This 177-nucleotide RNA was probed chemically with DMS. It was measured as part of the RMDB library TTRDEL.
[RMDB]
RNA sequence: GGGAACGACUCGAGUAGAGUCGAAAAGAUAUGGAUGACAGGCAACAGCUACGGGUCGGAAACGACCCGGUAGACAUGCCUGGAGUCCUAAGUCAAAGUAAGCCUCUGGUUCGCCAGAGGCUUACAAUCUUUGAGAAUUGUUCGCAAUUCUCAAAGAAAAAGAAACAACAACAACAAC
Reactivity to DMS in 0.01 (KOAc 150mM, MgCl2 10mM, bicine 150mM(pH8.5), 24C), signal-to-noise 2, nucleotides 027 to 126: g000a020u000a120u010g000g000a010u000g000a300c000a010g010g000c000a060a120c300a170g020c000u000a010c010g010g000g030u000c010g020g010a020a020a080c010g020a030c010c000c000g000g010u000a000g000a170c110a120u000g010c010c000u000g010g000a280g010u000c000c000u010a000a080g010u000c020a110a120a130g000u000a000a000g010c010c000u000c000u000g010g010u000u050c150g010c000c010a010g010a010g000g010c000u000u000a000c010a110a060